RNA sequence: GGGAACGACUCGAGUAGAGUCGAAAAUGGAUAACGGAGCGACCAUGGAUACUACUAUCAACGAUAAUUAUCCUUUACACGAAUACUUUGCUAACAAUAAUAAUAUCGUCGAUGCAGACGUCGUAAGUACUCCGCGAUGGUUCGCCAUCGCGGAGUAAAAAGAAACAACAACAACAAC
Reactivity to 2A3 in 0.01 (KOAc 150mM, MgCl2 10mM, bicine 150mM(pH8.5), 24C), signal-to-noise 1, nucleotides 027 to 126: u040g000g020a000u040a120a000c060g020g040a010g030c000g010a000c000c000a100u030g000g000a040u030a120c000u040a060c040u010a090u100c000a090a030c000g030a000u010a300a050u040u140a000u020c000c000u010u000u010a200c130a000c000g160a100a010u250a140c110u210u070u090g170c150u300a240a000c000a090a060u070a000a000u000a060a000u000a170u120c000g110u000c040g010a000u080g060c000a000g120a060c000g000u090c080g060u180a060a000g020